[RMDB]
Description
Structure probing data (2A3 and DMS) for a 177-nucleotide construct.
RNA sequence: GGGAACGACUCGAGUAGAGUCGAAAAGAUAUGGAAUCAUGGUGCAAGGCGAAUCACUCGGAAACGAGUGAUACCGCUGAUGACCACCUGUGAUUCCUAAGUCAAAAGUAGUCCUUCGGGACUACAACUUACUGCAAAAGUUCGCUUUUGCAGUAAGAAAAGAAACAACAACAACAAC
Reactivity to 2A3 in 0.01 (KOAc 150mM, MgCl2 10mM, bicine 150mM(pH8.5), 24C), signal-to-noise 4, nucleotides 027 to 126: g010a020u080a030u140g000g000a000a000u000c000a020u050g000g000u020g020c170a300a300g090g010c000g010a030a020u000c000a000c000u000c000g030g000a080a070a030c010g010a020g020u010g000a000u010a020c040c030g000c020u020g010a110u100g020a020c040c000a020c000c040u150g040u030g050a010u000u020c010c000u020a110a030g040u030c020a050a020a040a210g000u000a000g000u000c010c000u020u080c300g100g000g000a000c000u000a000c000a010a010
Reactivity to DMS in 0.01 (KOAc 150mM, MgCl2 10mM, bicine 150mM(pH8.5), 24C), signal-to-noise 6, nucleotides 027 to 126: g010a040u000a300u010g000g000a010a020u000c000a050u010g010g010u000g010c030a070a130g020g030c010g000a160a040u010c000a000c000u000c010g020g000a100a070a170c000g020a030g020u000g010a010u000a010c280c010g020c010u000g010a060u030g010a170c300c000a020c010c000u010g040u000g010a010u000u000c000c000u000a020a050g000u000c030a110a140a130a110g010u000a010g010u000c000c000u000u020c280g010g010g010a010c000u000a000c000a050a160

The DMS profile rests on 6,433 reads. The reactions ran in a buffer of 150 mM KOAc, 10 mM MgCl2 and 150 mM bicine (pH 8.5), at 24 C. Source: RMDB library TTRDES, as collected in RNAgym. Values cover nucleotides 27 to 126.